Source: RMDB library OK1LIB, as collected in RNAgym. Structure probing data (DMS and 2A3) for a 177-nucleotide construct. Values are in units of 0.01, from 0 to 300, in steps of 10. The DMS profile rests on 4,071 reads. 2A3 adducts were read by reverse transcription with SuperScript II with manganese. The reactions ran in a buffer of 150 mM KOAc, 10 mM MgCl2 and 150 mM bicine (pH 8.5), at 24 C.
[RMDB]
RNA sequence: GGGAACGACUCGAGUAGAGUCGAAAAGAAUCUCACUUGGGCGGGUGCUUUAGUGACUCCAGCGCGUAUUAGUGAGAUUAUGAAUACGUUGGGGAUUUAUGUGAAAUGAUUACGCGCAAAGUAAGAAGGGUAAACUAAUGUUCGCAUUAGUUUACCCAAAAGAAACAACAACAACAAC
Reactivity to DMS in 0.01 (KOAc 150mM, MgCl2 10mM, bicine 150mM(pH8.5), 24C), signal-to-noise 2, nucleotides 027 to 126: g000a060a040u010c080u000c010a020c020u030u050g010g030g050c090g030g010g010u020g020c060u000u020u030a100g020u000g000a070c030u020c050c060a180g030c000g020c000g030u000a020u020u040a060g000u000g000a080g000a040u000u040a000u010g010a070a060u010a040c070g030u010u010g010g000g000g000a090u020u010u010a040u000g020u000g000a090a050a100u010g000a090u000u000a000c010g010c000g000c050a130a010a040g020u010a080a070g030a150a180
Reactivity to 2A3 in 0.01 (KOAc 150mM, MgCl2 10mM, bicine 150mM(pH8.5), 24C), signal-to-noise 2, nucleotides 027 to 126: g090a020a030u030c000u000c000a050c000u000u060g000g050g020c090g000g220g010u110g110c020u110u050u100a040g020u120g120a030c040u040c030c020a050g000c010g000c050g010u050a060u080u020a100g000u030g030a000g000a010u070u000a020u010g030a020a000u060a030c080g040u110u090g020g010g020g030a050u000u080u000a080u020g170u010g010a000a030a040u090g080a040u060u080a060c000g000c030g030c040a010a040a000g100u070a000a060g040a150a050